[RMDB]
RNA sequence: GGGAACGACUCGAGUAGAGUCGAAAAGGGAUACGCCUUUCUCCCCCCGCCUGAGGGAGAAGGAAGAGACUAAUCAGGCUAGCUGCACGGAGGCCUGUCUUUGGGCUGAAGUGCUAGCGAAAUACGAAUACAAAGACUACGCUCGUAGAAGCGUAAGCCAUGAUAUCACGUUCGCGUGAUAUCAUGGAAAAGAAACAACAACAACAAC
Reactivity to 2A3 in 0.01 (KOAc 150mM, MgCl2 10mM, bicine 150mM(pH8.5), 24C), signal-to-noise 9, nucleotides 027 to 156: g070g020g030a040u050a060c010g020c000c010u080u270u060c010u010c010c000c000c000c000c000g000c000c000u000g000a010g000g000g000a000g010a010a000g030g020a000a010g040a000g030a030c140u210a070a030u040c000a000g000g000c000u000a000g000c000u000g000c000a000c000g000g010a020g010g000c000c000u010g000u010c000u000u000u000g000g000g000c000u010g000a020a000g000u000g000c000u000a000g000c000g010a000a000a010u300a080c130g080a010a000u000a000c000a000a000a000g000a000c000u000a000c000g010c000u010c030g210u270a080g040a200a000g030c000g000u010a020a010g050
Reactivity to DMS in 0.01 (KOAc 150mM, MgCl2 10mM, bicine 150mM(pH8.5), 24C), signal-to-noise 1, nucleotides 027 to 156: g020g020g000a150u000a060c020g010c000c010u000u000u000c020u000c020c000c000c010c070c080g030c060c010u000g020a040g000g030g000a020g030a040a030g000g010a080a060g000a180g010a190c090u000a040a020u000c060a040g020g000c000u000a080g040c000u000g010c000a030c000g000g000a300g000g000c000c030u000g000u000c010u010u000u010g010g020g000c000u000g010a300a300g020u000g000c030u010a000g000c010g000a080a040a150u000a130c180g000a010a040u000a050c020a000a020a030g010a050c000u010a010c020g000c000u000c030g000u010a080g040a000a020g030c000g000u010a000a050g010